[RMDB]
RNA sequence: GGGAACGACUCGAGUAGAGUCGAAAACUUAUAUUCAUCUCUAAACAUUAUACCAUCAAAAUCUUCAGUAUAUUCAAAUCCAUCAUCGCGCGUAUUACAAUCUCUAAUUUCAUAUACUCCUAGUUUUGAUAGAUGCAAUCGAUGGCCGGUGGUUUUAUAUCCCGUAAGAAUUCGUUCUUACGGGAUAAAAAGAAACAACAACAACAAC
Reactivity to 2A3 in 0.01 (KOAc 150mM, MgCl2 10mM, bicine 150mM(pH8.5), 24C), signal-to-noise 2, nucleotides 027 to 156: c000u060u090a060u080a130u270u150c130a210u050c020u000c040u180a110a120a090c020a050u150u200a070u200a180c020c040a010u040c010a070a010a060a280u040c050u250u090c070a010g150u070a050u000a020u200u220c030a020a080a190u020c050c010a020u050c000a020u040c000g010c010g020c040g090u110a060u060u090a050c030a000a140u020c020u010c020u130a100a120u090u080u020c040a000u060a000u080a240c010u030c000c010u020a050g000u030u020u010u090g010a020u040a040g060a050u020g010c020a050a050u040c020g090a030u080g030g030c040c010g000g010u070g010g000u120u110u160u180a100
Reactivity to DMS in 0.01 (KOAc 150mM, MgCl2 10mM, bicine 150mM(pH8.5), 24C), signal-to-noise 1, nucleotides 027 to 156: c050u010u000a130u010a110u020u000c000a120u000c010u030c030u000a100a120a100c010a060u000u000a110u010a130c030c020a090u010c010a040a070a080a040u000c020u000u000c000a080g040u010a040u000a010u020u020c030a050a060a070u000c040c040a060u000c020a060u000c040g010c030g030c080g030u010a030u010u000a060c090a050a070u010c050u010c060u010a070a090u000u000u000c000a040u010a030u010a080c010u020c030c050u000a050g000u000u000u000u000g030a070u010a040g000a100u000g010c040a030a060u010c040g020a070u000g020g050c050c040g010g070u000g020g020u000u000u000u000a100